[RMDB]
RNA sequence: GGGAACGACUCGAGUAGAGUCGAAAAAUUGGAAUUGUGUGGAUUGUGACACUGCAGGUGUGGGGAAUACCUUCAUCUGUGAAGAAGUCGCAAAUGACCUCACUACCGCCCUACGCAGGCCUAUUAACAACACUAUUAACUUCGGUUAAUAGUGUUGAAAAGAAACAACAACAACAAC
Reactivity to DMS in 0.01 (KOAc 150mM, MgCl2 10mM, bicine 150mM(pH8.5), 24C), signal-to-noise 5, nucleotides 027 to 126: a060u010u000g030g020a100a110u010u010g010u010g020u000g010g010a200u000u000g010u000g010a020c010a140c050u000g000c010a020g010g010u000g010u000g000g000g010g000a230a090u020a130c010c010u000u000c000a000u000c010u000g020u010g010a190a050g020a150a140g020u000c010g020c010a000a030a070u000g010a140c020c000u000c000a010c020u000a160c020c010g000c030c010c000u000a090c150g030c100a060g010g010c070c030u000a070u000u000a090a190
Reactivity to 2A3 in 0.01 (KOAc 150mM, MgCl2 10mM, bicine 150mM(pH8.5), 24C), signal-to-noise 4, nucleotides 027 to 126: a000u110u100g010g030a050a070u170u030g010u000g010u020g020g000a040u020u010g000u000g010a000c010a000c050u030g010c000a000g000g000u000g000u010g000g010g000g020a060a120u150a270c000c000u000u000c000a010u010c000u000g000u030g000a010a060g040a050a010g000u010c000g000c010a020a030a070u110g090a070c000c000u000c010a010c000u010a030c000c000g000c000c000c010u030a040c080g020c050a040g030g100c020c030u110a090u230u120a130a040
This 177-nucleotide RNA was probed chemically with DMS and 2A3. Reactivities are rounded to 0.1 and cut off at 0 and 3. The 2A3 profile rests on 6,492 reads. The reactions ran in a buffer of 150 mM KOAc, 10 mM MgCl2 and 150 mM bicine (pH 8.5), at 24 C. For DMS the reverse transcriptase was MarathonRT. It was measured as part of the RMDB library 15KREP.